[RMDB]
RNA sequence: GGGAACGACUCGAGUAGAGUCGAAAAGCAAUCGUCUCGUCUGGAUCAUCGUCACAGAAAAACCCGGAGUAGGCAGCCUCUGUUCCUUCCGGAGCCGGAGCGGUGGCGGGAGCCUGAGCAGGCUCGGCCUCGGAUGAGCAUUCGUGCUCAUCCGAGGAAAAGAAACAACAACAACAAC
Reactivity to 2A3 in 0.01 (KOAc 150mM, MgCl2 10mM, bicine 150mM(pH8.5), 24C), signal-to-noise 2, nucleotides 027 to 126: g050c000a020a100u050c050g020u000c040u020c000g130u000c010u000g010g020a050u030c020a020u030c070g060u020c020a020c050a180g150a040a120a000a000a020c000c000c020g030g000a060g020u110a060g000g050c050a020g030c010c030u050c020u030g070u070u020c000c000u070u040c000c050g090g020a010g000c020c000g010g050a040g000c030g000g060u020g000g000c000g020g040g020a010g000c020c060u050g010a030g040c020a010g010g020c000u000c000g010g010
Reactivity to DMS in 0.01 (KOAc 150mM, MgCl2 10mM, bicine 150mM(pH8.5), 24C), signal-to-noise 1, nucleotides 027 to 126: g000c150a070a030u080c090g000u000c000u040c030g010u010c050u030g030g010a070u030c040a090u030c000g000u030c020a070c120a110g000a010a040a010a130a180c060c010c120g070g030a020g000u030a090g000g000c090a220g010c050c000u030c050u000g020u010u000c020c000u030u030c000c020g000g020a050g000c120c060g000g000a150g000c020g010g000u000g030g000c020g000g000g000a120g000c000c010u000g000a140g030c080a010g000g010c000u000c010g000g010